Chemical mapping of a 177-nucleotide RNA with DMS and 2A3.
The RNA was probed in 150 mM KOAc, 10 mM MgCl2 and 150 mM bicine (pH 8.5) at 24 C.
For 2A3 the reverse transcriptase was SuperScript II with manganese.
Reactivities are given for positions 27 through 126.

[RMDB]
RNA sequence: GGGAACGACUCGAGUAGAGUCGAAAAGCGAUAGCGUUCGCGCUAUCGCAAAUAAAUUCAGCGGAUUAAAUUUCGAGGCCAUAACCGCUGAUGGCCUCGAAAAAACUCGACAGUUCGCUGUCGAGAAGGCAAAGUUAUAGUUCGCUAUAACUUUGCCAAAAGAAACAACAACAACAAC
Reactivity to DMS in 0.01 (KOAc 150mM, MgCl2 10mM, bicine 150mM(pH8.5), 24C), signal-to-noise 2, nucleotides 027 to 126: g010c000g010a010u000a000g030c000g030u010u030c220g020c020g030c000u000a010u010c000g010c010a010a030a020u000a040a030a090u000u010c020a040g020c070g030g000a170u010u010a060a070a170u000u000u000c010g020a010g010g010c000c010a030u000a100a090c050c030g000c060u030g010a030u000g020g010c000c000u000c000g000a010a010a030a080a110a090c010u000c000g000a010c000a000g010u000u010c200g020c020u000g010u000c000g000a010g010a080a040
Reactivity to 2A3 in 0.01 (KOAc 150mM, MgCl2 10mM, bicine 150mM(pH8.5), 24C), signal-to-noise 3, nucleotides 027 to 126: g000c000g010a000u010a010g000c000g000u050u050c180g000c000g010c100u000a000u000c010g000c000a000a010a010u020a000a020a020u070u070c010a010g040c020g060g090a060u160u300a110a090a170u080u130u060c020g000a000g000g000c000c000a020u040a060a060c000c040g000c020u000g030a000u000g000g000c010c000u000c000g010a000a000a000a000a000a000c010u010c000g010a000c000a010g040u060u070c150g030c140u010g000u000c010g010a000g030a020a040
For 2A3, 4,060 sequencing reads were counted.